Record summary:
Chemical mapping of a 177-nucleotide RNA with 2A3 and DMS. Conditions: 150 mM KOAc, 10 mM MgCl2 and 150 mM bicine (pH 8.5), 24 C. The 2A3 profile rests on 1,898 reads. The data come from the RNA Mapping Database (RMDB), library M2PK90.

RNA sequence: GGGAACGACUCGAGUAGAGUCGAAAAAGAAAGAGAGCGUAGCACACACACAGACUAAGUCUGACACACACGUACGCUACAUGUGUGUGUGAAGUCGAGAUAUCGACAAGUGUGUGUGAUGAAAAAAGUAUUAGAUCGCGUUCGCGCGAUCUAAUACAAAAGAAACAACAACAACAAC
Reactivity to 2A3 in 0.01 (KOAc 150mM, MgCl2 10mM, bicine 150mM(pH8.5), 24C), signal-to-noise 2, nucleotides 027 to 126: a000g030a010a080a010g140a000g000a010g010c070g030u050a010g010c030a000c000a000c010a000c000a000c010a000g030a020c010u150a130a120g030u020c000u030g010a000c010a000c000a000c000a000c010g030u110a020c160g090c110u050a050c090a040u090g020u000g010u000g000u000g010u000g050a060a030g000u000c010g030a010g060a130u190a070u160c010g010a010c020a120a150g000u000g000u020g000u000g010u000g010a020u030g060a010a060a040a010a000a000
Reactivity to DMS in 0.01 (KOAc 150mM, MgCl2 10mM, bicine 150mM(pH8.5), 24C), signal-to-noise 2, nucleotides 027 to 126: a060g030a070a070a070g010a130g000a070g030c090g030u000a180g000c000a020c000a020c000a010c000a080c010a030g000a020c020u020a140a130g000u020c000u020g000a080c020a030c000a000c030a000c000g040u000a060c180g010c160u000a050c110a030u000g000u000g040u000g030u000g010u000g000a070a100g000u000c000g010a010g000a130u020a080u000c010g010a000c010a090a080g000u000g020u010g010u010g020u000g000a070u000g000a000a040a090a050a070a100